[RMDB]
RNA sequence: GGGAACGACUCGAGUAGAGUCGAAAAGAUAUGGACUAUACGGCACGAUAAGAGUCCAUUCGGAAACGAAUGGAACUCUUUUGACGUGCGUAUAGUCCUAAGUCAAAGCACAGCUUCGGCUGUGCAACUCCUACCUCAACUUCGGUUGAGGUAGGAGAAAAGAAACAACAACAACAAC
Reactivity to 2A3 in 0.01 (KOAc 150mM, MgCl2 10mM, bicine 150mM(pH8.5), 24C), signal-to-noise 2, nucleotides 027 to 126: g000a010u030a040u080g000g000a000c000u010a020u020a020c170g300g020c120a010c040g190a170u130a300a000g010a000g020u000c010c000a000u000u030c030g020g000a000a040a030c000g000a000a010u000g040g010a050a060c000u010c020u020u030u000u200g300a120c070g010u000g000c000g000u000a000u000a000g010u000c000c000u000a010a000g000u010c030a050a060a000g000c010a010c000a020g030c000u100u190c300g230g000c000u000g000u000g000c030a000a010
Reactivity to DMS in 0.01 (KOAc 150mM, MgCl2 10mM, bicine 150mM(pH8.5), 24C), signal-to-noise 1, nucleotides 027 to 126: g000a040u010a260u000g000g000a030c000u000a000u000a000c000g070g060c000a000c010g000a260u010a010a010g020a020g020u000c000c010a010u000u000c000g010g000a040a050a120c020g020a000a000u000g000g030a060a070c000u010c000u000u000u030u020g030a210c080g050u010g010c020g010u000a010u000a010g000u000c000c030u000a000a070g010u000c030a170a160a230g040c000a020c000a010g020c010u000u010c220g020g050c010u010g020u000g000c000a040a040